RNA sequence: GGGAACGACUCGAGUAGAGUCGAAAACACGGAGCCGUCACGUGCAACCCAGGGUGCGCGUGGUUCAGGACACGGACCUGAAUUGGCGGAACCGUCGGAGUGUCCGUGACCCACUUCGCGAGUGGACCGAGGUGCGUACCUUCGGGUGCGUACUUCGAAAAGAAACAACAACAACAAC
Reactivity to 2A3 in 0.01 (KOAc 150mM, MgCl2 10mM, bicine 150mM(pH8.5), 24C), signal-to-noise 9, nucleotides 027 to 126: c020a000c000g010g000a010g020c000c000g010u020c010a000c000g000u000g000c000a010a000c010c000c040a090g130g050g010u000g000c010g000c000g010u030g040g040u020u020c010a000g000g020a010c010a010c030g020g030a010c000c000u000g020a020a020u040u080g010g000c000g010g010a040a060c020c000g040u040c050g060g040a090g040u110g030u000c000c000g000u010g000a000c000c000c000a000c000u000u000c000g000c000g000a000g000u000g000g000a000c000
Reactivity to DMS in 0.01 (KOAc 150mM, MgCl2 10mM, bicine 150mM(pH8.5), 24C), signal-to-noise 9, nucleotides 027 to 126: c070a070c010g000g000a080g010c030c030g010u010c010a060c010g020u000g000c020a050a000c010c030c100a130g000g010g030u000g000c010g010c010g010u010g010g010u010u000c040a020g000g000a150c020a030c040g000g000a050c000c000u000g010a040a130u020u030g010g000c000g010g010a060a070c040c010g000u010c080g010g010a090g000u020g010u000c020c000g010u000g000a010c000c000c000a000c000u000u000c000g000c000g000a000g000u000g000g000a000c010
Notes: This 177-nucleotide RNA was probed chemically with 2A3 and DMS. For DMS, 96,194 sequencing reads were counted. The data come from the RNA Mapping Database (RMDB), library OK1LIB. As a SHAPE reagent, 2A3 marks flexible, mostly unpaired nucleotides at the ribose 2'-OH. Conditions: 150 mM KOAc, 10 mM MgCl2 and 150 mM bicine (pH 8.5), 24 C. Values cover nucleotides 27 to 126. For DMS the reverse transcriptase was MarathonRT.